[RMDB]
RNA sequence: GGGAACGACUCGAGUAGAGUCGAAAAACAGUACCAGCUGCUACGGCAGCUGGUACUGAACUUUCAUGGAGUUAAGAAACCACGUAAACAAAGCGGAACCGAUAAGCUAAACGAGUAGGAAGAAUAAAUAGGUACCACCACUUCGGUGGUGGUACAACAUAACGACAAUCUUCGGAUUGUCGUUAUGAAAAGAAACAACAACAACAAC
Reactivity to 2A3 in 0.01 (KOAc 150mM, MgCl2 10mM, bicine 150mM(pH8.5), 24C), signal-to-noise 1, nucleotides 027 to 156: a000c000a000g000u000a010c000c000a010g000c000u000g010c010u070a060c220g100g010c000a000g010c000u000g000g000u010a010c000u000g000a000a000c000u010u050u030c000a020u090g100g010a030g020u090u090a100a070g080a060a080a000c050c000a010c040g040u070a000a000a130c060a210a040a000g000c000g010g030a010a030c010c010g020a090u030a180a000g040c060u100a260a060a000c010g020a030g070u050a050g050g120a020a060g000a030a120u070a100a140a030u140a070g060g030u010a000c000c000a000c000c000a000c000u020u070c210g050g030u010g000g020u000g000g000u000a000c000a000a000
Reactivity to DMS in 0.01 (KOAc 150mM, MgCl2 10mM, bicine 150mM(pH8.5), 24C), signal-to-noise 1, nucleotides 027 to 156: a230c010a020g070u020a010c010c000a010g000c000u000g050c000u000a130c300g060g030c010a040g060c000u000g000g030u000a000c000u000g000a030a090c140u000u000u000c090a110u000g040g040a210g050u000u000a120a130g000a180a150a060c030c010a080c090g000u000a080a010a080c060a000a050a090g000c010g000g020a080a110c050c060g000a100u000a020a040g020c030u000a040a080a080c050g040a120g010u000a040g010g010a070a080g000a080a100u000a050a010a190u000a110g000g030u000a060c010c010a000c000c000a050c000u000u030c300g020g060u000g020g060u000g000g020u010a010c000a010a030

Structure probing data (2A3 and DMS) for a 207-nucleotide construct.
Source: RMDB library M2RFPK, as collected in RNAgym.
For 2A3, 683 sequencing reads were counted.